[RMDB]
The record gives the reactivity of an RNA of 177 nucleotides to DMS and 2A3.
RNA sequence: GGGAACGACUCGAGUAGAGUCGAAAAUAGGGAUCCUAGCAGCUUGCGGAAAAAGCUCUGAUAGCUUCCUGUCCUGGACGCUCUGUCGGCAAUGCGUGCCAAGCUGGGGAUUUCUGGUGUGUGAAGCCCACAUACAGGGUUUCGACCCUGUAUGUGGAAAAGAAACAACAACAACAAC
Reactivity to DMS in 0.01 (KOAc 150mM, MgCl2 10mM, bicine 150mM(pH8.5), 24C), signal-to-noise 3, nucleotides 027 to 126: u020a050g000g010g000a020u000c020c010u010a130g050c010a030g000c020u000u000g010c050g000g010a030a050a080a120a190g000c020u000c040u000g010a070u000a040g010c030u000u000c020c020u000g010u010c200c100u000g010g010a040c080g000c040u000c140u000g040u010c070g010g020c300a070a110u010g000c040g000u010g040c110c040a020a020g010c010u000g020g000g010g010a030u000u000u000c010u010g000g010u000g040u010g000u020g000a110a160g000c140
Reactivity to 2A3 in 0.01 (KOAc 150mM, MgCl2 10mM, bicine 150mM(pH8.5), 24C), signal-to-noise 2, nucleotides 027 to 126: u170a000g010g000g030a000u010c000c020u050a100g190c020a010g000c010u060u040g040c050g060g000a120a060a020a030a040g000c020u030c050u070g060a080u060a100g110c000u020u020c010c030u060g200u170c020c080u030g040g010a000c030g020c010u010c020u080g040u040c000g000g040c050a050a050u150g040c040g020u070g040c080c020a010a000g000c020u000g000g050g000g000a000u020u000u020c020u030g050g010u130g000u070g010u020g080a050a030g040c030
The RNA was probed in 150 mM KOAc, 10 mM MgCl2 and 150 mM bicine (pH 8.5) at 24 C.